[RMDB]
RNA sequence: GGGAACGACUCGAGUAGAGUCGAAAAGCAUUUCGUUGCUUUUGGACUGUAGUAACAUAGCUAUUCCCCUUUCGGCGAGACUUGGCGUGUUUCUGUCGUUCUUAGUAUAGCAUAUUUAUAAUGCGCUGCCGCAUCUUGCUUUCGAGCAAGAUGCGGCAAAAGAAACAACAACAACAAC
Reactivity to 2A3 in 0.01 (KOAc 150mM, MgCl2 10mM, bicine 150mM(pH8.5), 24C), signal-to-noise 1, nucleotides 027 to 126: g000c000a040u050u170u120c050g060u040u090g000c000u000u000u060u000g180g000a030c000u000g000u180a000g000u000a000a000c060a060u000a030g000c000u030a010u000u040c080c000c000c000u080u300u220c060g000g030c140g040a010g020a000c050u050u020g000g020c020g050u060g000u050u000u050c100u070g000u000c000g000u000u000c000u010u010a060g000u030a000u060a030g000c000a050u000a140u050u160u000a220u090a290a000u150g030c070g000c000u000